[RMDB]
The record gives the reactivity of an RNA of 177 nucleotides to 2A3 and DMS.
RNA sequence: GGGAACGACUCGAGUAGAGUCGAAAAGUGUGAGCAGAAGGAUUGUCCCCUCAUAUAAGGAUCGGCUUGUCAUUUUCACUACCUGUACUCCUUUAUCGUACAACCACUCGAGACUGUGUGGGCAGUCUGAUAGCGCCAUGUUCGCAUGGCGCUAUCAAAAAGAAACAACAACAACAAC
Reactivity to 2A3 in 0.01 (KOAc 150mM, MgCl2 10mM, bicine 150mM(pH8.5), 24C), signal-to-noise 1, nucleotides 027 to 126: g120u050g020u040g020a090g050c010a010g020a150a000g100g040a090u000u210g070u140c030c000c000c000u010c070a120u130a000u010a030a030g010g000a030u030c020g040g010c020u050u030g060u070c030a030u060u060u140u120c120a090c060u020a070c020c040u020g000u050a040c020u110c050c020u030u100u080a200u120c030g000u080a020c000a070a000c010c020a130c020u090c020g070a080g010a050c040u010g090u040g020u080g100g030g010c000a010g010u000c020
Reactivity to DMS in 0.01 (KOAc 150mM, MgCl2 10mM, bicine 150mM(pH8.5), 24C), signal-to-noise 2, nucleotides 027 to 126: g010u000g040u000g000a080g010c070a060g010a120a100g020g010a100u000u010g030u000c010c020c040c060u020c110a080u010a110u030a060a090g000g010a060u000c040g020g020c080u010u000g000u020c070a130u000u000u000u000c050a060c070u000a090c070c010u000g000u010a050c080u000c030c070u000u000u020a060u030c060g010u020a060c100a070a120c100c040a050c090u010c050g030a110g000a110c060u030g000u000g010u060g000g010g000c040a010g000u000c030

About this RNA:
2A3 adducts were read by reverse transcription with SuperScript II with manganese. The 2A3 profile rests on 830 reads. The RNA was probed in 150 mM KOAc, 10 mM MgCl2 and 150 mM bicine (pH 8.5) at 24 C. Reactivities are given for positions 27 through 126. DMS adducts were read by reverse transcription with MarathonRT. For DMS, 1,592 sequencing reads were counted.